[RMDB]
RNA sequence: GGGAACGACUCGAGUAGAGUCGAAAAUCCACUGUUGCUAACGACUCCGCGAGGAGGGCGAGUACACUGUGGAGACCGCUGGCGCUAAGUCAGAGGAAGGAUUGGUCGACGGUAGGUCAGUAUGCCCUCGUUUCACAUCUUUCGAGAUGUGAAACGAAAAAGAAACAACAACAACAAC
Reactivity to 2A3 in 0.01 (KOAc 150mM, MgCl2 10mM, bicine 150mM(pH8.5), 24C), signal-to-noise 5, nucleotides 027 to 126: u000c000c000a010c000u010g060u080u040g010c000u000a030a000c000g000a000c000u000c000c010g020c040g070a090g010g000a000g000g030g000c000g000a000g000u010a020c050a000c140u030g010u010g010g000a010g000a010c010c020g000c010u010g000g010c000g000c090u140a120a010g050u040c020a040g050a040g150g080a110a070g100g030a090u070u090g050g010u130c020g010a050c010g010g090u130a120g040g020u030c030a020g050u090a060u190g060c000c010c000
Reactivity to DMS in 0.01 (KOAc 150mM, MgCl2 10mM, bicine 150mM(pH8.5), 24C), signal-to-noise 3, nucleotides 027 to 126: u010c000c010a010c000u000g010u010u000g000c010u010a020a030c000g010a110c000u000c000c010g000c300g010a200g020g020a010g000g000g000c010g000a030g000u010a010c190a010c010u000g000u000g000g000a030g010a030c000c000g000c020u020g000g000c020g020c040u020a060a080g030u000c030a050g010a130g030g000a220a120g030g000a090u000u020g000g000u010c010g010a040c030g000g010u000a050g040g000u010c040a140g030u010a050u010g000c000c000c010
Chemical mapping of a 177-nucleotide RNA with 2A3 and DMS. Reactivities are given for positions 27 through 126.